[RMDB]
RNA sequence: GGGAACGACUCGAGUAGAGUCGAAAACCCCAGGGAUAACAGAGUUGUCCCCGGCGAGAGUACAUAUCGACCCGGGGGCUUGCUACCUCGAUGUCGGCUCUCCCCAUCCUGGCCGUGCAGCAGCGGCGCGCUUACGCUUAUUCGUAAGCGUAAGCGCAAAAGAAACAACAACAACAAC
Reactivity to DMS in 0.01 (KOAc 150mM, MgCl2 10mM, bicine 150mM(pH8.5), 24C), signal-to-noise 2, nucleotides 027 to 126: c000c030c020c060a160g000g000g000a090u050a030a150c150a070g000a070g030u010u000g000u000c000c000c000c000g000g000c050g000a300g000a000g000u080a100c300a180u080a050u010c000g000a300c300c020c000g030g020g030g000g010c000u000u010g000c050u000a070c030c020u000c030g000a060u020g000u000c000g090g000c190u070c000u000c000c050c030c050a040u050c090c070u010g000g000c090c020g030u000g000c030a080g050c040a230g040c020g000g000c050
Reactivity to 2A3 in 0.01 (KOAc 150mM, MgCl2 10mM, bicine 150mM(pH8.5), 24C), signal-to-noise 4, nucleotides 027 to 126: c000c000c000c020a050g050g030g030a070u070a140a050c060a030g060a010g100u060u060g010u040c000c000c000c000g000g000c020g000a030g000a010g010u110a080c090a180u240a060u070c020g010a030c020c010c000g000g020g030g010g000c010u000u030g000c000u040a070c010c010u030c040g040a060u140g060u050c010g040g000c010u010c000u020c040c010c000c000a030u030c000c020u030g040g010c000c000g020u030g010c170a190g000c010a000g030c010g030g000c000

Chemical mapping of a 177-nucleotide RNA with DMS and 2A3. Conditions: 150 mM KOAc, 10 mM MgCl2 and 150 mM bicine (pH 8.5), 24 C. For DMS the reverse transcriptase was MarathonRT. 2A3 adducts were read by reverse transcription with SuperScript II with manganese.